Conditions: 150 mM KOAc, 10 mM MgCl2 and 150 mM bicine (pH 8.5), 24 C. An RNA of 177 nucleotides, treated with DMS and read out base by base. For DMS the reverse transcriptase was MarathonRT.

[RMDB]
RNA sequence: GGGAACGACUCGAGUAGAGUCGAAAAGAUAUGGAUUGAGCGCACGGAGUCGGAAACGACUCGGUGCUCGCAACCCCGCUUUGUCCUAAGUCAAACACCCGUAGCAGCUUCGGCUGCUACGGGUGAACUUUGAUCACAAGUUCGCUUGUGAUCAAAGAAAAGAAACAACAACAACAAC
Reactivity to DMS in 0.01 (KOAc 150mM, MgCl2 10mM, bicine 150mM(pH8.5), 24C), signal-to-noise 2, nucleotides 027 to 126: g000a090u000a130u010g000g010a060u000u000g010a020g030c300g000c010a010c010g020g010a020g020u010c010g000g010a110a090a240c000g000a000c010u000c000g000g020u000g000c000u000c020g010c020a000a020c020c000c020c300g000c020u000u000u010g000u010c000c000u000a070a130g010u000c130a050a120a160c030a020c010c010c000g010u000a000g020c000a000g010c000u000u030c210g020g020c020u010g010c020u000a010c000g000g000g010u000g000a000a010